[RMDB]
RNA sequence: GGGAACGACUCGAGUAGAGUCGAAAAGAUAUGGAAUUCGACUUUCGAAGAACACUCGCAUAGUAUACUCUUAUCGGAAACGAUAAGAGGUAUACUAUGCGAGUGGGAGAAACCGAAUUCCUAAGUCCUAUACUUAUUUCUUCGGAAAUAAGUAUAGAAAAGAAACAACAACAACAAC
Reactivity to DMS in 0.01 (KOAc 150mM, MgCl2 10mM, bicine 150mM(pH8.5), 24C), signal-to-noise 3, nucleotides 027 to 126: g010a110u010a300u010g010g010a020a030u000u000c000g010a120c280u000u000u000c000g010a130a210g000a200a240c000a010c000u010c000g000c000a010u000a020g000u000a000u000a000c000u000c010u000u000a020u000c000g010g000a140a100a230c020g000a010u000a000a000g010a030g010g020u010a010u000a010c000u000a010u000g000c000g010a000g010u000g000g000g000a080g000a000a010a020c200c000g010a020a020u000u000c000c000u000a040a090g000u000c030
Reactivity to 2A3 in 0.01 (KOAc 150mM, MgCl2 10mM, bicine 150mM(pH8.5), 24C), signal-to-noise 1, nucleotides 027 to 126: g030a020u170a100u300g000g010a010a030u040u030c000g030a070c030u030u040u000c120g300a300a100g040a170a010c010a000c000u000c000g010c000a000u000a000g040u000a010u000a010c020u010c000u050u000a000u010c000g110g020a300a040a040c070g000a020u090a000a000g060a000g000g000u000a000u000a000c000u000a020u020g000c000g000a000g000u000g020g010g000a020g000a000a000a030c010c000g020a000a000u000u060c000c000u040a180a020g030u050c010